RNA sequence: GGGAACGACUCGAGUAGAGUCGAAAACUGCACGCGGGCGCCGGGCAUCGCCAGUGCAAGCACCGAGCCAAAGAAGAUGCCGAGGUGCAUCGCGUGCGCCACGACGUACGUCAGGCUCGGGAAGCGCAUCACGAUAAAUCUUCGGAUUUAUCGUGAUAAAAGAAACAACAACAACAAC
Reactivity to DMS in 0.01 (KOAc 150mM, MgCl2 10mM, bicine 150mM(pH8.5), 24C), signal-to-noise 3, nucleotides 027 to 126: c080u020g010c010a010c020g000c010g010g010g000c010g000c020c000g020g000g020c020a020u000c010g010c140c140a120g020u030g010c100a150a140g000c020a200c030c000g000a060g000c000c030a050a100a120g010a090a080g000a000u000g000c000c010g030a120g050g040u010g010c000a050u010c000g000c020g010u000g010c020g000c030c030a100c140g020a060c100g000u030a060c080g000u050c010a180g000g000c000u000c000g000g000g000a120a080g010c010g010c110
Reactivity to 2A3 in 0.01 (KOAc 150mM, MgCl2 10mM, bicine 150mM(pH8.5), 24C), signal-to-noise 3, nucleotides 027 to 126: c040u030g000c000a000c020g010c030g010g020g000c010g000c010c000g020g000g010c000a010u010c010g040c070c040a070g050u070g070c050a030a010g050c020a040c020c020g000a010g010c010c040a110a110a060g140a070a030g000a020u010g000c000c000g040a250g010g000u060g000c030a130u050c000g000c000g000u000g000c000g000c000c010a130c050g130a020c030g060u250a010c030g040u080c050a040g000g020c000u000c000g010g010g040a090a020g030c040g000c020
Chemical mapping of a 177-nucleotide RNA with DMS and 2A3. Conditions: 150 mM KOAc, 10 mM MgCl2 and 150 mM bicine (pH 8.5), 24 C. For 2A3, 10,016 sequencing reads were counted. For 2A3 the reverse transcriptase was SuperScript II with manganese.